[RMDB]
RNA sequence: GGGAACGACUCGAGUAGAGUCGAAAAUCUAAUGUCUUCGGACAUUAGAAAAGGCGGAGGCACGCACCUAGCGACCGGCGCAAGGACGCACGUGACUGCGAAAAAUCACCGAGUUCGCUCGGUGAAAGAGUAAUAAAUUGUUCGCAAUUUAUUACUCAAAAGAAACAACAACAACAAC
Reactivity to 2A3 in 0.01 (KOAc 150mM, MgCl2 10mM, bicine 150mM(pH8.5), 24C), signal-to-noise 5, nucleotides 027 to 126: u010c000u000a020a000u000g000u000c010u020u040c140g110g000a000c000a000u010u010a000g000a010a110a000a000g090g010c010g010g070a030g020g010c040a000c060g020c010a040c010c040u010a020g000c010g040a090c060c050g090g100c030g000c040a020a040g050g020a120c020g000c030a020c050g040u050g060a060c020u050g030c020g040a060a040a000a020a060u030c000a000c000c000g000a000g000u040u040c150g030c090u000c000g000g000u000g000a000a000a000
Reactivity to DMS in 0.01 (KOAc 150mM, MgCl2 10mM, bicine 150mM(pH8.5), 24C), signal-to-noise 7, nucleotides 027 to 126: u010c000u000a000a000u010g010u000c000u000u000c220g040g000a010c000a010u000u000a000g010a030a050a100a110g020g020c030g000g000a070g010g020c030a030c040g010c090a090c040c040u000a100g020c030g010a150c110c090g010g010c040g000c060a090a070g010g000a090c070g010c070a070c040g000u000g000a060c050u000g000c040g010a020a050a060a090a120u010c000a000c000c000g000a020g010u000u010c220g020c000u000c000g000g010u000g000a010a020a060